[RMDB]
RNA sequence: GGGAACGACUCGAGUAGAGUCGAAAAGAUAUGGACAACGUAUGACGCAACAGCUAAGGUCGGAAACGACCUUAGACAUGCGUAUACAGUUGUCCUAAGUCAAAAGCCACUGGUUCGCCAGUGGCAACAGUUUGCGUAUGUUCGCAUACGCAAACUGAAAAGAAACAACAACAACAAC
Reactivity to DMS in 0.01 (KOAc 150mM, MgCl2 10mM, bicine 150mM(pH8.5), 24C), signal-to-noise 3, nucleotides 027 to 126: g020a080u040a300u050g040g020a010c010a000a000c000g020u010a010u020g020a050c010g040c000a050a080c300a240g000c010u000a000a000g000g000u000c000g000g000a090a080a230c010g010a040c020c000u000u000a000g020a060c120a130u000g020c010g030u000a020u000a000c000a080g020u000u000g010u010c020c000u000a000a120g030u000c050a050a080a120a160g010c000c000a010c000u020g000g000u000u010c290g010c000c000a010g030u010g010g000c000a010a000
Reactivity to 2A3 in 0.01 (KOAc 150mM, MgCl2 10mM, bicine 150mM(pH8.5), 24C), signal-to-noise 2, nucleotides 027 to 126: g030a000u080a040u130g000g010a010c000a010a000c000g030u010a000u120g130a080c000g030c010a030a140c040a300g020c020u000a000a000g020g000u000c000g040g000a050a090a070c000g000a000c000c000u010u000a000g020a000c000a030u060g020c010g010u020a000u000a010c040a000g000u000u000g000u000c000c000u000a050a000g040u020c030a030a050a070a140g000c020c000a000c020u020g010g060u040u090c250g060c130c000a010g000u020g000g000c000a000a000